[RMDB]
RNA sequence: GGGAACGACUCGAGUAGAGUCGAAAAUCAAAGGGCAUUGCAAAGCGCCAAUCCCUGUUGCGCCUCAACCCGGAUUGCCCCCAGUUAAGCAUGGAGACAAUAUAAGCCCACUAAAUCCGGUACACUAUCCAAGGCUAACUUUCGAGUUAGCCUUGGAAAAAGAAACAACAACAACAAC
Reactivity to DMS in 0.01 (KOAc 150mM, MgCl2 10mM, bicine 150mM(pH8.5), 24C), signal-to-noise 2, nucleotides 027 to 126: u000c040a030a080a050g020g010g010c100a020u020u030g060c170a130a090a060g010c140g010c160c020a040a050u010c010c010c050u000g000u000u000g000c150g000c020c080u010c090a070a150c300c010c000g020g000a030u000u000g020c000c020c000c000c010a060g000u010u000a080a110g020c040a130u000g010g000a220g000a050c010a040a090u010a130u010a060a030g000c040c020c030a100c210u000a020a020a050u000c010c040g000g030u000a080c090a050c160u010a130